Structure probing data (DMS and 2A3) for a 177-nucleotide construct. The RNA was probed in 150 mM KOAc, 10 mM MgCl2 and 150 mM bicine (pH 8.5) at 24 C. Source: RMDB library OK2TST, as collected in RNAgym. For 2A3, 735 sequencing reads were counted.

RNA sequence: GGGAACGACUCGAGUAGAGUCGAAAAGGUUCCGAGACUGGGAAAGAUUACACCAACGCGUGGAAGGCUGCCCUGGCCUACAGGGCCAUGGAUUUUGAGCCCAUGACGGGCUGUGAGGAGCCGGUCGACAGCCUAAGACGUUCGCGUCUUAGGCUGUAAAAGAAACAACAACAACAAC
Reactivity to DMS in 0.01 (KOAc 150mM, MgCl2 10mM, bicine 150mM(pH8.5), 24C), signal-to-noise 2, nucleotides 027 to 126: g030g040u010u000c000c010g020a160g020a050c050u000g030g000g010a070a070a060g000a160u010u010a070c060a040c000c030a100a120c230g010c130g020u000g000g000a100a130g000g030c020u010g000c070c000c020u000g000g030c020c010u000a090c120a090g000g000g000c000c000a010u000g000g000a160u010u000u000u000g010a090g000c030c000c000a050u010g030a070c090g010g000g000c030u010g010u040g020a160g020g000a120g020c040c000g000g030u020c040g000
Reactivity to 2A3 in 0.01 (KOAc 150mM, MgCl2 10mM, bicine 150mM(pH8.5), 24C), signal-to-noise 1, nucleotides 027 to 126: g010g000u040u010c020c000g030a040g010a000c050u080g000g020g100a110a000a180g130a180u180u130a060c010a000c030c010a300a060c120g030c070g000u030g030g090a110a050g120g050c010u050g030c050c000c000u010g030g000c000c010u060a100c090a150g000g000g000c000c010a050u030g060g060a080u200u090u040u190g010a030g010c000c000c000a010u050g010a030c060g040g000g000c120u030g060u010g050a070g020g050a030g040c000c030g000g000u070c040g010
Record summary: The DMS profile rests on 1,783 reads.